The record gives the reactivity of an RNA of 177 nucleotides to DMS and 2A3.
[RMDB]
RNA sequence: GGGAACGACUCGAGUAGAGUCGAAAAUAACAGUGUUCGGAAAUGAAAAUUUCCGUUAAUUAGCAAUGACUGUAUGCUAAUUGACGUAUGUGAAAACAUACGAAUGCUGUUUAACAGUCAUUGAUACGAACUUGUGUAAUUUCGAUUGUACAAGUUCAAAAGAAACAACAACAACAAC
Reactivity to DMS in 0.01 (KOAc 150mM, MgCl2 10mM, bicine 150mM(pH8.5), 24C), signal-to-noise 9, nucleotides 027 to 126: u020a010a000c000a000g010u000g010u000u000c000g000g000a010a010a000u000g010a100a060a130a020u000u000u000c000c000g000u000u000a000a000u000u000a010g000c000a050a110u010g010a020c000u000g010u000a210u010g000c000u000a000a010u000u000g000a010c000g000u000a000u000g010u000g010a150a070a130a020c000a010u000a000c010g010a010a000u000g000c000u000g000u000u000u000a060a030c010a010g000u000c000a170u040u030g010a130u030a090c240
Reactivity to 2A3 in 0.01 (KOAc 150mM, MgCl2 10mM, bicine 150mM(pH8.5), 24C), signal-to-noise 9, nucleotides 027 to 126: u090a000a000c000a000g000u000g020u020u000c010g010g040a010a010a010u050g080a040a100a050a050u010u000u000c000c000g000u000u000a000a000u000u000a000g000c010a010a030u060g000a000c000u000g000u020a020u070g000c000u000a000a000u000u000g010a000c010g010u000a000u000g020u010g100a070a040a010a010c000a000u000a000c000g010a000a000u010g000c000u000g000u000u000u010a010a000c000a000g000u000c010a020u040u300g110a100u100a100c100